[RMDB]
RNA sequence: GGGAACGACUCGAGUAGAGUCGAAAAAUGACCGCGUGGGUGCCAACCAGUCAGCCGAGUGUCCUAGGAUCCGUCAACUUCCACAUCGAGGGAAUUGCCAUCCCCCUCACAGCGACAGAGAUGAGAGCUCAGGUUUGACAUUCGUGUCAAACCUGAGAAAAGAAACAACAACAACAAC
Reactivity to 2A3 in 0.01 (KOAc 150mM, MgCl2 10mM, bicine 150mM(pH8.5), 24C), signal-to-noise 2, nucleotides 027 to 126: a000u140g010a040c010c000g000c020g020u040g010g020g010u010g080c030c010a030a030c010c000a060g080u070c040a000g020c010c000g070a090g070u050g030u060c000c030u020a010g050g050a040u030c030c020g040u030c010a050a090c030u020u020c090c000a080c040a130u100c110g000a140g000g000g030a040a070u100u130g050c020c010a020u010c000c000c030c000c000u060c000a100c000a010g010c000g080a030c040a030g050a010g000a020u030g050a070g010a020g160
Reactivity to DMS in 0.01 (KOAc 150mM, MgCl2 10mM, bicine 150mM(pH8.5), 24C), signal-to-noise 2, nucleotides 027 to 126: a020u000g000a170c020c020g070c140g060u000g000g000g020u020g000c010c000a110a130c140c060a100g010u000c020a110g000c080c010g000a180g000u020g000u000c020c050u020a030g010g000a060u000c010c020g010u000c160a020a050c130u000u000c000c000a060c130a140u020c180g000a120g030g000g000a030a160u050u050g000c070c060a110u000c070c020c000c010c000u040c020a100c170a080g010c300g000a030c020a130g000a150g010a040u050g000a160g000a200g030
Structure probing data (2A3 and DMS) for a 177-nucleotide construct. For DMS the reverse transcriptase was MarathonRT. For DMS, 1,416 sequencing reads were counted. The reactions ran in a buffer of 150 mM KOAc, 10 mM MgCl2 and 150 mM bicine (pH 8.5), at 24 C. Values cover nucleotides 27 to 126.